[RMDB]
RNA sequence: GGGAACGACUCGAGUAGAGUCGAAAACUACCUCACUGGUGCAUCUGUGGAGGACCUGCAGAAGAGCGUGUUUCUGGAGAAGCUGAUCCAGAAGGGCUACGAGGUCAUCUUCUUCACGGAGCCCAUCGACGGACACGCUUUUCGAAGCGUGUCCGUCAAAAGAAACAACAACAACAAC
Reactivity to 2A3 in 0.01 (KOAc 150mM, MgCl2 10mM, bicine 150mM(pH8.5), 24C), signal-to-noise 1, nucleotides 027 to 126: c020u070a090c020c030u090c030a060c090u130g000g000u210g060c050a300u000c000u000g030u000g020g040a010g010g000a050c000c000u100g030c040a060g030a300a050g030a020g090c020g170u190g140u170u000u000c000u000g000g060a080g020a260a070g150c180u150g210a080u040c010c010a000g000a000a000g000g030g000c000u000a020c040g120a030g000g000u000c000a080u000c020u300u060c010u060u000c000a020c000g020g000a000g000c000c000c010a080u140c050